[RMDB]
Description:
This 177-nucleotide RNA was probed chemically with DMS. For DMS, 754 sequencing reads were counted.

RNA sequence: GGGAACGACUCGAGUAGAGUCGAAAAGCUACAACAAGGAGCAAAAUAUGGGGUGGGGGGUUAGGCGUGUCCCUGAUACUCCCUAGGCUUUAGUUCUAUCCUUGAAAGCCUUUACCUUUGAUGAUUACUGUGCGCUAUUAUUCGUAAUAGCGCACAGAAAAGAAACAACAACAACAAC
Reactivity to DMS in 0.01 (KOAc 150mM, MgCl2 10mM, bicine 150mM(pH8.5), 24C), signal-to-noise 1, nucleotides 027 to 126: g000c010u000a110c160a050a290c000a000a000g000g000a060g010c200a140a060a040a000u010a120u020g040g000g000g010u000g000g000g020g000g000g030u010u010a070g000g030c070g030u000g020u070c090c020c000u010g000a090u000a020c090u000c000c000c040u020a080g070g010c020u000u010u000a020g010u010u000c120u000a200u000c050c040u000u000g010a180a080a170g010c010c040u010u020u000a100c010c020u000u000u000g000a090u000g010a180u000u010a150